[RMDB]
Background
The record gives the reactivity of an RNA of 207 nucleotides to 2A3 and DMS. For 2A3 the reverse transcriptase was SuperScript II with manganese. For DMS the reverse transcriptase was MarathonRT. For DMS, 2,480 sequencing reads were counted. In probing experiments dimethyl sulfate is read out at A N1 and C N3, which are open when not base-paired.
RNA sequence: GGGAACGACUCGAGUAGAGUCGAAAAGUGCCUCGUCGGCCCGGCAGGCCAACCUGAUCCGAAGUUCAAGGUGGUUUCUCUGGCCUUCCAGAGAGAUGCGCGUCGGAAGAACCGACGAACAAACCUUAAAACAAAACGACGUUCGCGUCGUUUUGAACGUUUAAUUCUUCUUCGGAAGAAUUAAACGAAAAGAAACAACAACAACAAC
Reactivity to 2A3 in 0.01 (KOAc 150mM, MgCl2 10mM, bicine 150mM(pH8.5), 24C), signal-to-noise 4, nucleotides 027 to 156: g060u040g080c040c000u010c010g020u000c020g000g050c030c020c000g000g000c020a030g020g030c020c010a100a140c020c010u010g000a010u050c010c040g070a080a010g030u060u090c060a060a020g010g000u010g010g000u020u120u000c010u000c000u010g030g000c040c110u280u120c020c000a000g010a010g000a000g020a050u150g070c090g010c040g070u010c000g000g020a100a060g030a100a080c010c000g010a010c010g020a030a020c050a030a060a050c000c020u170u240a060a140a020a020c000a000a010a000a000c000g010a000c010g010u030u070c220g020c000g060u010c000g000u010u000u000u000g000a020a000
Reactivity to DMS in 0.01 (KOAc 150mM, MgCl2 10mM, bicine 150mM(pH8.5), 24C), signal-to-noise 1, nucleotides 027 to 156: g020u010g030c020c010u000c030g010u020c040g060g030c040c030c070g040g010c090a180g020g010c020c040a030a000c020c060u000g000a100u000c020c100g000a150a140g000u020u000c010a080a040g020g030u000g000g010u000u000u000c000u010c000u000g030g000c200c110u000u000c000c000a070g000a040g000a030g030a080u020g030c020g050c060g020u000c040g000g000a130a190g000a100a110c000c000g000a020c010g010a030a060c040a080a080a090c070c000u010u000a010a040a100a240c020a000a010a020a000c000g050a000c030g040u000u020c240g020c070g020u000c000g020u000u000u000u000g000a050a180